Source: RMDB library RNAMAK, as collected in RNAgym. Chemical mapping of a 207-nucleotide RNA with DMS and 2A3.
RNA sequence: GGGAACGACUCGAGUAGAGUCGAAAAGCCACGUACGUUCGCGUACGUGGCAAAAAGCGUACUACGAGGGAGAUCAGUCCUACCCACCUCCCAAAUAGGAGAGGGACGAUCGUUGAUCUCGUAUCGCAAAAAACUUACCCACUUCGGUGGGUAAGAACAGAAAAGUAUUGUUCGCAAUACUUUUCUGAAAAGAAACAACAACAACAAC
Reactivity to DMS in 0.01 (KOAc 150mM, MgCl2 10mM, bicine 150mM(pH8.5), 24C), signal-to-noise 2, nucleotides 027 to 156: g020c000c000a000c010g020u030a010c000g000u000u010c300g040c000g040u020a000c000g060u000g000g000c020a000a000a020a080a040g020c030g050u000a080c140u010a000c010g000a130g000g010g000a070g030a010u000c020a160g050u020c010c000u010a070c020c020c050a300c130c000u000c000c000c020a010a120a180u010a040g000g010a020g040a300g020g020g010a000c010g010a040u000c010g020u000u000g010a090u000c010u010c010g010u000a030u000c010g020c020a000a040a050a070a100a060c000u000u000a030c010c030c020a010c020u000u000c300g060g030u000g020g000g010u000a000a000g020a130a160
Reactivity to 2A3 in 0.01 (KOAc 150mM, MgCl2 10mM, bicine 150mM(pH8.5), 24C), signal-to-noise 2, nucleotides 027 to 156: g000c020c010a010c000g000u010a010c000g010u000u060c210g000c010g140u030a020c000g030u080g050g010c030a030a030a000a000a000g030c020g010u060a030c040u000a000c020g010a000g000g030g010a010g000a000u010c060a110g010u010c010c010u040a190c060c030c010a080c000c010u040c000c000c020a130a160a120u300a060g010g010a010g010a030g030g010g000a010c000g000a000u010c000g040u100u000g010a010u000c000u000c000g000u020a030u190c050g000c070a020a090a000a000a000a000c000u000u000a020c000c020c010a000c000u060u060c240g050g000u000g000g000g020u000a000a000g000a020a010

The 2A3 profile rests on 2,532 reads.